[RMDB]
RNA sequence: GGGAACGACUCGAGUAGAGUCGAAAAACAGUACCAGCUGCUAUGGCAGCUGGUACUGAACUUUCAUGGAGUUAAGAAACCACGUAAACAAAGCGGAACCGAAAAGCUAAACGAGUAGGAAGAAUAAAUAGGUACCACCACUUCGGUGGUGGUACAACCUAGAGUGUAACUUCGGUUACACUCUAGGAAAAGAAACAACAACAACAAC
Reactivity to 2A3 in 0.01 (KOAc 150mM, MgCl2 10mM, bicine 150mM(pH8.5), 24C), signal-to-noise 1, nucleotides 027 to 156: a000c000a000g000u000a000c000c000a010g010c000u020g000c130u200a060u300g170g040c020a000g000c000u000g000g000u000a000c000u000g000a000a000c010u020u120u090c010a000u070g050g030a000g060u140u120a100a000g030a050a080a000c040c030a000c040g090u260a170a090a000c100a090a070a000g030c000g020g000a070a000c000c000g000a000a010a000a000g010c030u100a260a020a050c000g000a000g010u010a020g110g000a110a000g020a080a080u250a140a040a090u120a150g020g110u000a000c000c000a000c000c000a000c000u050u040c180g120g000u020g010g020u000g000g000u070a020c030a000a000